This 207-nucleotide RNA was probed chemically with DMS and 2A3. The data come from the RNA Mapping Database (RMDB), library OK3TST. Conditions: 150 mM KOAc, 10 mM MgCl2 and 150 mM bicine (pH 8.5), 24 C.
RNA sequence: GGGAACGACUCGAGUAGAGUCGAAAAAGUUCUAGUCCUCACCUAAGAUCAGACUAACACGGCCCUCAAAGCAAGAGCACUGGGUUGGGCUUUGUGGUGGGGAUUAGUGUCUCAUUUUUAGUCCCAAAUUAAAAACGAGAUUUUGGGCUGUACAUCAGACCUAGUUUUAUUUCGAUAAAACUAGGUCAAAAGAAACAACAACAACAAC
Reactivity to DMS in 0.01 (KOAc 150mM, MgCl2 10mM, bicine 150mM(pH8.5), 24C), signal-to-noise 1, nucleotides 027 to 156: a100g020u020u000c010u000a020g010u010c020c000u000c030a010c020c000u020a090a110g000a210u010c140a090g010a100c010u000a000a080c010a030c050g000g000c000c090c000u000c020a050a090a220g040c240a130a220g020a060g010c150a020c070u000g010g010g010u000u000g000g020g000c020u000u010u000g010u000g070g050u010g050g050g020g010a020u000u000a020g020u000g000u000c000u030c000a010u000u000u000u050u000a070g000u000c020c050c050a090a060a080u010u010a020a040a000a010a040c000g000a050g010a130u000u010u000u000g010g000g020c170u000g010u010a060c060a150u000c050a280
Reactivity to 2A3 in 0.01 (KOAc 150mM, MgCl2 10mM, bicine 150mM(pH8.5), 24C), signal-to-noise 2, nucleotides 027 to 156: a000g050u110u000c000u000a010g010u000c010c000u030c000a000c000c030u090a080a030g030a110u120c050a070g110a130c050u130a160a000c010a020c080g030g000c000c010c010u020c010a020a210a100g050c110a170a020g040a010g110c030a030c260u110g020g030g020u110u020g030g010g070c000u030u040u140g080u030g000g000u010g000g000g000g000a000u030u010a000g000u000g010u010c000u000c050a090u080u170u110u100u240a050g070u220c010c000c000a000a000a040u010u020a040a040a030a010a020c140g010a050g000a140u020u130u150u050g000g030g000c010u030g090u130a070c080a130u070c050a100